Structure probing data (2A3 and DMS) for a 170-nucleotide construct. DMS adducts were read by reverse transcription with MarathonRT. For 2A3, 63,820 sequencing reads were counted. The reactions ran in a buffer of 150 mM KOAc, 10 mM MgCl2 and 150 mM bicine (pH 8.5), at 24 C. Values cover nucleotides 27 to 129. Source: RMDB library 15KLIB, as collected in RNAgym.
RNA sequence: GGGAACGACUCGAGUAGAGUCGAAAAUGGCUCUCCCUUAGCCAUCCGAGUGGACGUUGUCCUCCUUCGGAUGCCCAGGUCGGACCGCGAGGAGGUGGAGAUGCCAUGCCGACCCGAAGAGGAAAGAAUAUCAGUGUGUUCGCACACUGAAAAAGAAACAACAACAACAAC
Reactivity to 2A3 in 0.01 (KOAc 150mM, MgCl2 10mM, bicine 150mM(pH8.5), 24C), signal-to-noise 9, nucleotides 027 to 129: u050g000g000c000u000c000u020c010c010c000u040u140a040g020c020c010a020u000c000c010g020a040g050u080g020g030a050c210g150u150u230g030u120c010c010u020c010c050u050u040c000g010g000a010u020g000c010c010c000a030g020g050u060c020g040g050a090c020c010g040c040g050a070g030g030a020g010g040u120g020g010a040g010a030u200g010c010c000a010u040g010c000c010g040a050c000c000c020g050a070a040g040a030g050g050a070a060a030g130a060a060u130a060
Reactivity to DMS in 0.01 (KOAc 150mM, MgCl2 10mM, bicine 150mM(pH8.5), 24C), signal-to-noise 9, nucleotides 027 to 129: u010g000g000c010u010c000u030c000c000c070u020u030a120g030c130c010a060u010c030c010g000a050g030u020g000g000a050c100g030u050u060g010u020c020c030u000c050c090u020u000c020g000g030a050u030g000c060c050c050a100g000g000u010c040g000g000a240c050c040g010c050g020a040g010g010a070g000g030u000g010g000a010g010a030u070g000c030c010a040u000g000c080c040g000a050c050c020c040g000a070a040g010a090g020g020a050a050a040g010a080a080u040a140